[RMDB]
RNA sequence: GGGAACGACUCGAGUAGAGUCGAAAAGUGGAUAGUUUCGACUAUCCACACAACUGAUGAUCUUACAGUGGAGGAUGAAGAAGAUGGCCAUCGGAUCCUCAAAUAGCACAGAGUUCGCUCUGUGCAAGUGGACUCGGGAAUUCGUUCCCGAGUCCACAAAAGAAACAACAACAACAAC
Reactivity to DMS in 0.01 (KOAc 150mM, MgCl2 10mM, bicine 150mM(pH8.5), 24C), signal-to-noise 1, nucleotides 027 to 126: g030u000g000g000a030u000a000g000u000u000u040c120g000a010c010u000a020u020c020c010a010c000a050c200a050a040c080u010g000a030u010g000a120u000c060u000u000a170c120a080g000u000g000g050a070g010g000a040u000g000a110a100g000a110a100g010a000u000g020g000c080c060a070u000c000g000g000a100u000c010c000u000c100a050a020a080u010a160g010c000a000c000a000g000a070g070u000u020c190g010c000u000c000u000g020u000g020c000a070a000
Reactivity to 2A3 in 0.01 (KOAc 150mM, MgCl2 10mM, bicine 150mM(pH8.5), 24C), signal-to-noise 1, nucleotides 027 to 126: g010u000g000g020a000u010a020g000u040u040u170c150g020a010c020u000a000u000c000c010a000c000a000c010a000a000c020u060g010a050u060g010a040u080c030u020u140a060c020a030g000u090g130g060a020g000g000a070u070g040a010a130g000a040a050g040a050u080g010g090c010c000a040u020c000g020g030a010u000c000c010u000c020a000a060a100u170a000g000c000a010c000a000g020a000g060u030u080c150g060c070u000c010u010g010u010g040c000a000a000
Chemical mapping of a 177-nucleotide RNA with DMS and 2A3. Conditions: 150 mM KOAc, 10 mM MgCl2 and 150 mM bicine (pH 8.5), 24 C. Values are in units of 0.01, from 0 to 300, in steps of 10. For 2A3 the reverse transcriptase was SuperScript II with manganese. The data come from the RNA Mapping Database (RMDB), library M2PK50. The DMS profile rests on 653 reads. The 2A3 profile rests on 1,636 reads.